Conditions: 150 mM KOAc, 10 mM MgCl2 and 150 mM bicine (pH 8.5), 24 C. Structure probing data (DMS) for a 177-nucleotide construct.
[RMDB]
RNA sequence: GGGAACGACUCGAGUAGAGUCGAAAAGAUAUGGAUUGAGCUAGCUGGAGGGUCGGAAACGACCCUUUUAGCUUGGACCUCACGGUCCUAAGUCAAAGUAAGGAACCUCUUCGGAGGUUCCUUACAACAUGACCAUAUGGUUCGCCAUAUGGUCAUGAAAAGAAACAACAACAACAAC
Reactivity to DMS in 0.01 (KOAc 150mM, MgCl2 10mM, bicine 150mM(pH8.5), 24C), signal-to-noise 6, nucleotides 027 to 126: g010a070u010a170u000g010g010a050u000u000g000a060g020c060u000a040g020c020u000g000g000a010g000g010g020u000c010g000g000a060a060a160c000g010a020c000c000c000u000u000u000u000a010g020c000u000u000g010g000a050c270c010u000c110a090c300g010g010u000c000c000u010a040a060g010u000c050a100a070a160g000u010a010a010g010g000a010a010c000c000u000c000u000u010c200g010g010a020g010g000u000u000c000c000u000u000a000c000a060a200